Record summary: This 207-nucleotide RNA was probed chemically with 2A3 and DMS. For DMS, 5,806 sequencing reads were counted. The data come from the RNA Mapping Database (RMDB), library M2RFPK. 2A3 adducts were read by reverse transcription with SuperScript II with manganese. For 2A3, 4,776 sequencing reads were counted.
[RMDB]
RNA sequence: GGGAACGACUCGAGUAGAGUCGAAAAGGGUGAGACCUAGGAGCCGUAGGGGUAUUCUCAAAGGAAGCUUUUGCAGUGACGCCCAUGUAAGUGGGAUAUAACAACAGAACUCGUAUGAGUAGCCUAAUAAAUCGGACCUUCUUCGGAAGGUCCGAAAUCGAAUGAUAAUCUUCGGAUUAUCAUUCGAAAAAGAAACAACAACAACAAC
Reactivity to 2A3 in 0.01 (KOAc 150mM, MgCl2 10mM, bicine 150mM(pH8.5), 24C), signal-to-noise 5, nucleotides 027 to 156: g030g000g000u050g010a110g010a070c010c030u050a060g060g030a020g010c060c040g060u080a050g000g030g000g000u040a080u090u080c040u020c030a050a050a020g050g010a060a040g040c020u040u060u070u070g020c040a030g020u010g050a020c050g000c010c000c010a010u050g080u110a110a120g020u020g000g000g010a020u040a010u020a090a050c050a010a020c010a030g060a060a020c010u020c050g080u170a090u200g010a020g020u040a020g030c000c010u080a110a070u100a130a150a030u040c000g000g000a000c000c000u010u000c000u020u000c060g060g000a000a000g000g000u000c000c000g000a000a000a000
Reactivity to DMS in 0.01 (KOAc 150mM, MgCl2 10mM, bicine 150mM(pH8.5), 24C), signal-to-noise 2, nucleotides 027 to 156: g000g000g030u000g000a080g010a050c020c030u000a150g000g000a120g000c070c050g020u000a080g020g000g010g020u000a080u000u000c010u000c020a050a100a150g020g000a060a060g030c030u000u000u010u000g020c050a080g010u010g000a140c110g000c010c000c010a050u000g010u000a070a170g010u000g000g010g010a040u000a070u000a130a120c050a100a090c040a120g000a060a030c010u000c030g040u000a100u000g010a070g020u000a100g010c040c040u000a040a090u000a060a080a160u010c010g000g000a030c000c000u010u000c000u000u000c300g040g000a010a010g020g000u000c020c000g000a010a000a050